This 177-nucleotide RNA was probed chemically with DMS and 2A3.
For 2A3 the reverse transcriptase was SuperScript II with manganese.
It was measured as part of the RMDB library OK2TRN.
DMS adducts were read by reverse transcription with MarathonRT.
The reactions ran in a buffer of 150 mM KOAc, 10 mM MgCl2 and 150 mM bicine (pH 8.5), at 24 C.
RNA sequence: GGGAACGACUCGAGUAGAGUCGAAAACGCCGGUGUGGAGGCCGGCGCGCUCGCAGGCAUCGUGUCCGGUUCGGGUCCCACGUGUGCCUUCCUGUGCACCUCGGCGAGCUCGGCGAUCGAUGUCGGCGACCCUACGCAUGUUCGCAUGCGUAGGGUCAAAAGAAACAACAACAACAAC
Reactivity to DMS in 0.01 (KOAc 150mM, MgCl2 10mM, bicine 150mM(pH8.5), 24C), signal-to-noise 1, nucleotides 027 to 126: c010g030c010c010g060g020u010g000u010g030g000a130g000g010c010c000g010g010c000g030c070g000c040u000c020g010c030a020g010g000c000a020u000c010g000u010g000u020c040c090g020g030u010u000c020g000g020g000u010c050c030c030a120c150g030u000g000u000g010c010c020u000u020c170c060u000g020u010g030c010a030c020c070u000c150g000g010c060g050a090g020c000u010c060g010g000c050g000a100u020c030g000a020u010g010u010c020g000g010c020
Reactivity to 2A3 in 0.01 (KOAc 150mM, MgCl2 10mM, bicine 150mM(pH8.5), 24C), signal-to-noise 1, nucleotides 027 to 126: c010g010c000c020g000g000u080g030u150g210g280a100g180g000c010c010g020g000c000g030c060g010c000u020c030g070c030a010g010g000c000a000u000c010g030u050g060u030c020c000g020g000u000u100c020g040g000g090u040c040c030c000a030c050g120u180g000u020g000c020c000u110u160c110c130u140g070u180g040c020a030c000c000u130c030g050g090c030g020a040g070c070u120c070g000g040c030g030a070u060c020g010a010u020g020u020c010g000g000c010